[RMDB]
RNA sequence: GGGAACGACUCGAGUAGAGUCGAAAAGAUAUGGACUGACAAUGAACUAUACUCAUCGAUCUUACGUAACAUCGUUUCGGAAACGAAACGUGGUAAGGGAGAGUACGUUCAUUGUCAGUCCUAAGUCGUUACCGACUCAGUUCGCUGAGUCGGUAACAAAAGAAACAACAACAACAAC
Reactivity to 2A3 in 0.01 (KOAc 150mM, MgCl2 10mM, bicine 150mM(pH8.5), 24C), signal-to-noise 1, nucleotides 027 to 126: g130a030u150a110u150g030g000a000c000u010g000a000c030a010a010u030g010a010a000c000u040a040u080a300c000u000c130a300u300c260g150a100u030c060u000u010a010c050g110u070a100a080c060a300u300c050g060u040u040u010c010g020g030a080a000a030c030g000a000a060a010c000g010u030g080g020u010a000a000g090g000g000a030g010a000g000u010a020c020g010u010u000c000a000u040u000g020u000c020a010g030u000c000c000u000a010a000g010u000c010
Reactivity to DMS in 0.01 (KOAc 150mM, MgCl2 10mM, bicine 150mM(pH8.5), 24C), signal-to-noise 1, nucleotides 027 to 126: g000a060u010a300u010g010g020a000c000u000g010a000c000a020a020u000g010a010a020c000u000a300u000a010c000u000c000a230u000c270g010a030u030c000u000u010a000c010g010u010a010a130c140a030u030c000g000u000u000u000c000g000g000a120a060a220c050g020a030a000a030c040g000u000g000g040u010a000a020g000g010g020a050g020a020g000u010a030c300g000u000u000c000a000u000u000g010u000c000a010g000u000c000c000u030a010a040g020u000c030

Chemical mapping of a 177-nucleotide RNA with 2A3 and DMS.
Values cover nucleotides 27 to 126.
It was measured as part of the RMDB library TTRINS.
For 2A3, 1,376 sequencing reads were counted.
2A3 adducts were read by reverse transcription with SuperScript II with manganese.